[RMDB]
RNA sequence: GGGAACGACUCGAGUAGAGUCGAAAAAUCGCUCUCCAGCUCCAUGCAGACGUGAAAAAGUCGGUGUGGCGUUUUCAUGAGCGGAAAUUAACAUUGUUCCAAAAAACAAUUGCUAGUCUCCUGUGAGUACUCAGAAAUGCUUCGGCAUUUCUGAGUAAAAAGAAACAACAACAACAAC
Reactivity to 2A3 in 0.01 (KOAc 150mM, MgCl2 10mM, bicine 150mM(pH8.5), 24C), signal-to-noise 2, nucleotides 027 to 126: a000u050c000g000c000u000c000u000c020c010a010g000c000u000c000c000a000u000g000c000a020g030a010c010g130u230g150a160a060a080a050a020g020u010c040g010g000u010g020u010g000g000c030g020u060u040u040u080c130a080u110g020a000g000c000g010g010a050a030a010u140u100a040a000c040a090u060u010g000u060u000c000c030a030a060a010a050a000a000c060a020a030u100u090g010c030u020a000g040u000c000u020c010c020u100g040u030g160a020g090
Reactivity to DMS in 0.01 (KOAc 150mM, MgCl2 10mM, bicine 150mM(pH8.5), 24C), signal-to-noise 2, nucleotides 027 to 126: a060u050c030g020c000u000c000u010c300c200a060g010c000u010c010c010a010u000g010c000a050g000a000c000g000u030g000a070a110a120a100a160g000u000c000g000g070u040g000u000g000g000c080g000u000u000u020u030c160a110u010g000a030g010c010g040g000a020a060a040u030u010a010a110c100a030u050u000g000u000u000c020c130a000a020a090a090a030a020c020a000a020u020u040g000c040u000a010g030u010c060u010c000c000u000g000u000g020a090g000